Chemical mapping of a 177-nucleotide RNA with 2A3 and DMS. For DMS, 41,110 sequencing reads were counted. For DMS the reverse transcriptase was MarathonRT. For 2A3, 21,953 sequencing reads were counted. As a SHAPE reagent, 2A3 marks flexible, mostly unpaired nucleotides at the ribose 2'-OH. DMS (dimethyl sulfate) methylates the pairing face of unpaired adenines and cytosines. The RNA was probed in 150 mM KOAc, 10 mM MgCl2 and 150 mM bicine (pH 8.5) at 24 C.
RNA sequence: GGGAACGACUCGAGUAGAGUCGAAAACAGUGGUAUAUUCUUCAAUGGGAUCAUACUGAGUCCAGGGGGUGAUGUACUCAUUCCGGAGAUGCAGUCAGCCUUGUUACAGCAGCACAUUGAGCUGCUAAGAUUACUUCAAAUUCGUUUGAAGUAAUCUAAAAGAAACAACAACAACAAC
Reactivity to 2A3 in 0.01 (KOAc 150mM, MgCl2 10mM, bicine 150mM(pH8.5), 24C), signal-to-noise 9, nucleotides 027 to 126: c030a020g050u070g100g020u080a080u020a040u150u060c040u100u100c080a100a160u120g010g010g020a020u050c040a020u090a140c030u040g040a010g070u010c050c050a080g010g000g000g000g060u030g010a040u070g030u070a060c020u010c020a040u160u050c030c000g020g030a070g000a020u040g010c010a020g110u060c010a020g050c010c000u050u100g080u100u120a090c070a040g010c010a000g000c010a030c020a150u090u160g040a030g020c000u010g000c000u010a000
Reactivity to DMS in 0.01 (KOAc 150mM, MgCl2 10mM, bicine 150mM(pH8.5), 24C), signal-to-noise 9, nucleotides 027 to 126: c080a080g020u000g010g010u000a040u000a040u000u000c020u000u000c160a090a090u010g000g000g000a030u000c110a080u000a050c050u000g000a150g010u000c030c030a240g010g010g000g000g020u000g010a050u000g000u010a100c080u000c020a070u000u000c090c090g010g010a100g010a070u000g010c050a040g010u000c060a090g000c020c030u000u000g010u000u010a110c200a040g010c010a010g010c010a090c140a180u010u010g000a080g010c000u000g010c010u000a030